[RMDB]
RNA sequence: GGGAACGACUCGAGUAGAGUCGAAAACGCAUGCGAAAGCAUGCGGCUAUGCUAAUGCAUAGUGACCGCCUUUUGGCACACCUCGCGGGCUAUCGCCUUGUUAUUGGUGAUAGCGUUUCCUCAUAGACUUGUUAUUGUCUGUGCAGGUCGUGUGCGACAGCGGUAUCCUAUUCGUAGGAUACCGCUGAAAAGAAACAACAACAACAAC
Reactivity to 2A3 in 0.01 (KOAc 150mM, MgCl2 10mM, bicine 150mM(pH8.5), 24C), signal-to-noise 7, nucleotides 027 to 156: c000g000c000a000u000g010c010g080a110a020a000g000c010a000u000g000c000g000g000c000u000a000u000g000c030u220a300a080u300g020c000a000u000a010g010u020g060a050c010c020g030c020c020u150u220u150u110g080g000c000a000c000a010c000c020u070c070g010c020g080g000g000c000u000a000u010c000g040c020c000u050u130g210u210u210a280u090u160g000g000u010g000a000u000a000g000c000g010u010u030u030c000c000u020c000a000u010a010g000a000c010u070u120g110u300u290a200u210u160g010u040c000u000g020u000g010c120a020g020g010u030c020g000u020g000u000g010c010g010a010
Reactivity to DMS in 0.01 (KOAc 150mM, MgCl2 10mM, bicine 150mM(pH8.5), 24C), signal-to-noise 2, nucleotides 027 to 156: c010g050c000a010u000g010c010g010a150a130a280g020c010a010u000g030c010g010g010c020u000a010u000g020c010u010a110a190u010g000c010a010u000a000g020u010g000a180c020c030g000c110c040u000u000u000u000g050g050c000a060c040a020c040c060u010c080g030c120g030g010g000c010u010a020u000c010g020c000c010u000u020g030u000u010a140u010u010g020g030u000g020a030u000a030g010c010g020u010u000u000c030c010u010c000a030u000a030g000a030c020u000u000g020u000u010a130u010u000g000u000c020u020g020u000g000c110a050g020g020u000c030g000u000g040u010g010c010g010a300